[RMDB]
The data come from the RNA Mapping Database (RMDB), library M2RFPK.
Chemical mapping of a 207-nucleotide RNA with DMS and 2A3.
2A3 adducts were read by reverse transcription with SuperScript II with manganese.
For 2A3, 1,696 sequencing reads were counted.
Conditions: 150 mM KOAc, 10 mM MgCl2 and 150 mM bicine (pH 8.5), 24 C.
For DMS the reverse transcriptase was MarathonRT.

RNA sequence: GGGAACGACUCGAGUAGAGUCGAAAAAUACACCAGCAGUAGGACUCAGCGACCGUCACAACAAGGUUGUGCUGGUAUCCGCCGGUCGUAUAGCCCUGUCUUGCAGGUUGCCUUGCACUGACGUGCCACACCAUUUACAGAUUCGUCUGUAAAUGAAGCCUAAUAACGCUUUCGAGCGUUAUUAGGCAAAAGAAACAACAACAACAAC
Reactivity to DMS in 0.01 (KOAc 150mM, MgCl2 10mM, bicine 150mM(pH8.5), 24C), signal-to-noise 1, nucleotides 027 to 156: a230u000a090c070a300c060c020a110g080c010a070g000u020a040g010g010a050c000u010c120a200g030c000g000a070c020c000g000u060c110a260c070a110a020c020a120a090g010g070u000u000g040u000g000c010u010g080g000u000a080u000c140c010g090c160c010g000g000u010c010g030u000a150u010a060g020c000c000c010u010g020u000c060u010u010g010c040a090g030g010u000u000g010c000c170u010u000g000c000a080c060u030g020a100c080g000u000g020c010c030a020c060a130c160c010a040u000u000u010a010c010a000g000a080u000u000c300g010u000c000u000g020u000a000a020a030u000g000a040a130
Reactivity to 2A3 in 0.01 (KOAc 150mM, MgCl2 10mM, bicine 150mM(pH8.5), 24C), signal-to-noise 3, nucleotides 027 to 156: a000u120a010c030a000c010c000a000g010c010a000g010u150a030g000g030a050c010u030c070a010g000c010g010a010c010c010g080u090c040a030c050a130a110c090a260a090g140g030u020u010g030u010g030c060u070g050g040u030a110u020c020c050g000c000c020g000g000u010c020g000u050a020u090a110g010c000c040c000u010g080u110c070u040u130g000c010a020g020g000u060u090g000c030c020u020u080g010c020a010c050u150g060a030c070g000u040g050c040c010a090c000a030c020c000a000u000u000u000a000c010a020g020a020u020u140c120g060u000c090u010g000u000a000a000a000u000g000a010a000